[RMDB]
RNA sequence: GGGAACGACUCGAGUAGAGUCGAAAACUGCCGCCACCAGACUAGACAACUAUCCCAAAACGUGGAUUAACGAGGAUGGCACUUACUAUCGUCCGGAGAAUUACAAUCUCGACUAUAACGACGGAACUAUGACUUGUCCAUUCGUGGACAAGUCAUAAAAAGAAACAACAACAACAAC
Reactivity to DMS in 0.01 (KOAc 150mM, MgCl2 10mM, bicine 150mM(pH8.5), 24C), signal-to-noise 1, nucleotides 027 to 126: c080u010g000c090c000g000c000c010a090c030c030a070g000a080c160u000a170g000a090c070a040a060c140u000a180u000c010c000c000a120a060a090a200c150g000u070g000g000a040u000u000a050a170c050g000a130g070g020a040u000g000g000c080a060c140u030u020a090c110u010a040u000c000g000u000c040c140g000g020a060g000a010a100u000u000a060c250a010a050u000c020u000c000g000a080c030u000a050u000a090a090c160g010a050c060g000g000a010a030c070
Reactivity to 2A3 in 0.01 (KOAc 150mM, MgCl2 10mM, bicine 150mM(pH8.5), 24C), signal-to-noise 1, nucleotides 027 to 126: c010u040g010c000c030g030c000c030a020c000c000a000g070a140c050u050a050g010a140c000a060a080c050u080a090u110c010c000c000a070a180a020a000c150g090u210g120g050a060u020u100a030a030c090g040a010g070g020a090u070g030g030c030a010c020u110u130a010c020u100a020u060c010g060u000c060c040g020g000a000g030a050a100u270u190a080c030a020a090u040c020u010c000g010a040c130u080a070u060a190a080c110g040a030c020g080g000a010a000c000